[RMDB]
RNA sequence: GGGAACGACUCGAGUAGAGUCGAAAACAGGCUGUCAUAUGCACCUGCCACCGCUUUUCGUCAAGAAACAGAAACCGCAACAGGGUGUCGCAGUAAUAAUCUUUCAGAAAGCGGGCAGUUUUAUGCCUGCCUUACAAUGUUUCGACAUUGUAAGGCAAAAAGAAACAACAACAACAAC
Reactivity to DMS in 0.01 (KOAc 150mM, MgCl2 10mM, bicine 150mM(pH8.5), 24C), signal-to-noise 8, nucleotides 027 to 126: c080a060g000g020c080u000g010u000c080a120u050a060u020g010c080a060c130c020u000g000c030c040a150c100c040g020c020u010u000u020u000c030g000u010c160a060a050g010a030a050a070c170a100g020a100a080a050c030c030g020c040a050a090c080a150g000g000g010u010g020u010c050g010c040a050g010u010a040a100u020a090a170u010c010u000u000u020c090a110g010a040a040a020g010c030g010g000g000c030a040g000u010u020u010u020a070u020g000c060c040
Reactivity to 2A3 in 0.01 (KOAc 150mM, MgCl2 10mM, bicine 150mM(pH8.5), 24C), signal-to-noise 9, nucleotides 027 to 126: c020a000g020g000c020u040g040u100c050a060u100a070u300g040c030a030c010c000u020g020c010c030a140c050c010g000c020u050u040u040u050c030g040u050c070a080a060g030a050a080a010c040a040g090a070a090a030c030c030g040c070a120a110c020a170g090g060g040u080g040u060c050g000c070a010g030u010a000a020u070a040a060u020c040u020u100u030c030a040g020a040a030a000g020c000g000g000g000c000a000g000u010u060u080u100a060u070g020c000c000